[RMDB]
This 207-nucleotide RNA was probed chemically with 2A3.

RNA sequence: GGGAACGACUCGAGUAGAGUCGAAAACGUCCCCGUCGUACAGAAUGGUAACAUAUCUCUCCAAAUAUCUGAGCUUGGGUAUACGGGGAAACCCAACCCCUUGGGAACAUUGGGUAUAUGGCUAAAUUACAUCGAUUGUACUUCGGUACAAUCGAAACGUCUGAAUAUGCUUCGGCAUAUUCAGACGAAAAGAAACAACAACAACAAC
Reactivity to 2A3 in 0.01 (KOAc 150mM, MgCl2 10mM, bicine 150mM(pH8.5), 24C), signal-to-noise 1, nucleotides 027 to 156: c050g130u030c000c000c010c030g120u050c000g000u010a020c030a060g070a050a150u140g060g050u120a120a030c050a090u090a140u010c080u000c000u000c140c020a090a190a040u180a100u070c060u040g040a040g030c050u130u070g030g010g000u020a020u010a050c050g000g010g000g000a000a030a000c010c000c020a030a040c000c060c000c000u000u060g020g030g030a080a020c020a040u040u060g000g000g050u040a040u030a050u130g080g010c030u100a080a080a080u290u160a080c050a080u030c020g000a000u000u000g000u000a000c000u010u030c130g020g000u000a000c010a000a000u000c000g000a000a000a000
The RNA was probed in 150 mM KOAc, 10 mM MgCl2 and 150 mM bicine (pH 8.5) at 24 C.